[RMDB]
RNA sequence: GGGAACGACUCGAGUAGAGUCGAAAAUGUGCUGAACAGCAGGCGUCCGACGCGGGCGUCUGCGGUGAUGGUCCGCACGAUGUUGGCCAUGCCCGCGCGAGUCUGCUCCCGCGCCGGUACCGCCGUGUGCGGAUGAUUAGUUCGCUAAUCAUCCGCAAAAAGAAACAACAACAACAAC
Reactivity to 2A3 in 0.01 (KOAc 150mM, MgCl2 10mM, bicine 150mM(pH8.5), 24C), signal-to-noise 2, nucleotides 027 to 126: u120g010u050g030c020u080g050a140a050c030a070g020c010a030g020g030c030g040u070c000c000g030a100c060g030c110g040g000g020c000g010u020c010u030g000c000g000g000u050g030a020u020g000g000u000c000c010g010c030a090c160g110a230u300g020u080u110g000g020c000c010a020u080g100c030c000c000g000c010g000c060g020a040g070u060c090u160g040c060u040c000c010c000g020c010g000c000c000g030g010u090a090c060c050g030c020c000g040u070g080
Reactivity to DMS in 0.01 (KOAc 150mM, MgCl2 10mM, bicine 150mM(pH8.5), 24C), signal-to-noise 3, nucleotides 027 to 126: u010g010u010g010c020u010g000a110a090c090a110g020c030a080g000g020c010g020u000c000c000g000a060c100g000c060g030g010g010c060g010u000c040u000g010c000g010g000u010g010a060u000g000g000u000c010c060g000c020a140c200g000a130u010g020u010u010g010g010c010c030a080u000g000c040c010c050g010c020g010c100g000a070g000u010c100u000g000c130u000c010c010c010g000c030g000c020c040g010g010u000a040c210c240g010c010c020g000u000g010
Structure probing data (2A3 and DMS) for a 177-nucleotide construct. The DMS profile rests on 3,400 reads. DMS adducts were read by reverse transcription with MarathonRT. The 2A3 profile rests on 2,097 reads.